[RMDB]
RNA sequence: GGGAACGACUCGAGUAGAGUCGAAAAAAUAUGCUCGACAGGCUGCCUGUCCGACAGAGCUUUUAGAUCUUGUGAUCUUUCCCUGCAGCAUAUCGCUUAUGCAUCAAGCGAUUGUCGGAUCACACAAAUAUGUAUCUCCAUUCGUGGAGAUACAUAUAAAAGAAACAACAACAACAAC
Reactivity to 2A3 in 0.01 (KOAc 150mM, MgCl2 10mM, bicine 150mM(pH8.5), 24C), signal-to-noise 6, nucleotides 027 to 126: a000a000u230a060u080g010c020u020c020g050a030c050a050g070g010c040u060g090c010c050u090g070u010c000c010g000a000c010a030g030a000g000c000u040u040u010u020a030g000a040u030c030u080u280g130u170g080a010u010c000u000u010u000c000c000c000u020g010c020a030g000c000a020u030a010u150c010g000c030u040u040a070u230g140c070a120u160c100a030a000g000c000g020a010u010u030g020u020c020g020g020a050u080c020a020c010a010c020a050a270
Reactivity to DMS in 0.01 (KOAc 150mM, MgCl2 10mM, bicine 150mM(pH8.5), 24C), signal-to-noise 9, nucleotides 027 to 126: a060a060u000a060u010g000c030u000c020g020a130c140a080g000g000c070u000g010c050c120u000g000u000c010c030g010a030c050a080g000a060g010c070u000u000u000u000a030g000a030u010c040u010u010g020u010g010a020u000c000u000u000u000c000c000c000u010g010c060a070g000c010a060u010a030u000c010g010c000u000u000a100u000g020c230a120u010c150a030a020g010c000g010a010u000u000g010u000c020g010g000a090u010c140a050c120a060c270a050a070
An RNA of 177 nucleotides, treated with 2A3 and DMS and read out base by base. The reactions ran in a buffer of 150 mM KOAc, 10 mM MgCl2 and 150 mM bicine (pH 8.5), at 24 C.